[RMDB]
RNA sequence: GGGAACGACUCGAGUAGAGUCGAAAACAUGGUGGCAAGUACGACGCGAUAUUGCACCACCUGCAAUAGAAGCGUAGACAUCAACUGUAGCGAGAGCUACUCAACUUAUGGACCUUAGAGCAUGCGAAGACGACCGGUCCUGUCGGAAUUCGCUAGACCAUAUAAUCAGCUUCGGCUGAUUAUAUGGAAAAGAAACAACAACAACAAC
Reactivity to DMS in 0.01 (KOAc 150mM, MgCl2 10mM, bicine 150mM(pH8.5), 24C), signal-to-noise 3, nucleotides 027 to 156: c050a100u010g030g040u010g010g000c040a060a090g020u000a090c050g020a080c020g020c010g000a180u010a030u000u000g010c000a120c070c180a110c130c230u010g030c010a010a050u000a040g000a130a240g010c020g010u000a110g000a070c070a120u020c050a090a070c020u000g000u020a020g010c030g000a270g000a210g030c020u000a020c000u000c080a050a100c130u020u000a110u000g000g000a080c020c020u000u000a090g020a090g030c010a080u000g040c030g000a110a070g010a150c030g000a100c020c040g010g000u000c020c030u000g000u000c000g010g010a100a160u000u000c050g010c050u010a140g010a300
Reactivity to 2A3 in 0.01 (KOAc 150mM, MgCl2 10mM, bicine 150mM(pH8.5), 24C), signal-to-noise 8, nucleotides 027 to 156: c050a040u080g020g000u020g040g020c060a090a050g080u090a100c090g010a030c010g070c000g040a050u010a000u020u020g000c010a020c030c040a050c030c090u020g000c010a000a010u010a020g110a160a010g030c000g020u020a020g050a060c020a040u080c040a040a100c060u090g000u010a000g000c020g020a030g000a010g070c010u020a020c020u010c040a060a160c030u130u120a040u120g040g020a040c000c010u060u100a060g010a020g080c060a080u110g010c010g010a020a010g040a070c030g010a010c010c040g050g040u030c010c020u010g010u000c010g020g060a100a100u040u030c000g000c030u020a030g030a070